RNA sequence: GGGAACGACUCGAGUAGAGUCGAAAAUCGUGCGGGCACUCGGCACCGCGCCAGCACGGACGGGUGAGUCCGUACAUCGUGUCUCGAAUCGUCGAGAUGCACGGCCGGCCCGAUCUCGUCGUCAGCAAAUGUGGACUGUUUUCGAACAGUCCACAUUAAAAGAAACAACAACAACAAC
Reactivity to 2A3 in 0.01 (KOAc 150mM, MgCl2 10mM, bicine 150mM(pH8.5), 24C), signal-to-noise 2, nucleotides 027 to 126: u080c060g000u030g000c010g000g000g000c000a020c140u090c140g060g020c070a050c110c000g030c000g000c010c010a040g000c060a010c040g040g000a000c010g020g000g140u110g100a070g050u000c000c030g060u010a020c030a090u160c120g060u010g000u000c020u010c010g190a230a300u230c100g150u050c000g300a010g020a010u040g080c020a000c020g010g000c020c000g050g000c010c010c000g040a100u050c050u030c020g060u020c020g080u120c020a040g050c050a050
Reactivity to DMS in 0.01 (KOAc 150mM, MgCl2 10mM, bicine 150mM(pH8.5), 24C), signal-to-noise 2, nucleotides 027 to 126: u000c040g010u010g000c020g010g000g010c080a090c130u000c050g000g000c070a130c020c130g000c130g010c010c000a160g030c010a010c020g010g010a060c020g000g000g020u010g010a080g020u020c000c000g010u020a030c050a120u010c160g010u000g000u010c000u000c020g010a040a220u020c200g000u000c030g000a040g010a040u000g000c010a100c120g010g000c080c020g000g010c300c000c000g000a010u000c000u000c070g010u010c050g010u010c100a130g020c160a040